RNA sequence: GGGAACGACUCGAGUAGAGUCGAAAAAAGUCACCCUCCUCGCAUCGCAAGUUCGUGCUUGCGACUUACACGUAGGGCGAGGGGGGGGCGAAAGUUGCCAUGAGACCGUAACUUUCGUAGUCAUUGAAAAACUACAAAGCCUUCGGGCUUUGUAGAAGGUUAAGUGUAUGUUCGCAUACACUUAACCAAAAGAAACAACAACAACAAC
Reactivity to DMS in 0.01 (KOAc 150mM, MgCl2 10mM, bicine 150mM(pH8.5), 24C), signal-to-noise 3, nucleotides 027 to 156: a070a070g010u000c020a040c000c000c000u010c000c000u000c000g060c080a170u000c000g000c010a010a000g010u000u000c260g010u000g010c000u020u000g010c000g020a030c030u000u010a110c150a120c170g020u000a150g010g020g020c020g000a030g000g020g000g030g000g000g000g040c010g000a010a020a050g020u000u010g010c000c030a280u000g010a200g010a150c130c070g010u010a020a020c020u000u000u000c020g020u000a130g020u010c090a160u000u010g000a120a100a080a080a120c010u000a020c000a000a010a020g000c020c010u000u010c300g060g010g020c000u000u000u000g010u000a000g010a030a040
Reactivity to 2A3 in 0.01 (KOAc 150mM, MgCl2 10mM, bicine 150mM(pH8.5), 24C), signal-to-noise 8, nucleotides 027 to 156: a000a000g200u160c120a180c020c010c000u000c000c000u010c010g010c010a050u020c010g000c000a010a010g010u220u250c150g170u300g110c000u000u010g000c000g000a000c000u050u110a060c100a040c110g190u170a090g070g120g000c010g000a010g000g000g000g000g000g000g010g010c010g000a000a000a000g000u000u000g010c010c020a040u070g080a050g020a270c040c030g000u010a000a000c000u000u010u000c010g000u010a030g080u070c060a060u040u090g050a080a050a030a020a020c000u000a000c000a000a000a000g000c000c010u040u100c210g060g010g000c000u000u010u000g000u000a000g000a000a010
Notes:
An RNA of 207 nucleotides, treated with DMS and 2A3 and read out base by base. It was measured as part of the RMDB library M2RFPK. Reactivities are given for positions 27 through 156.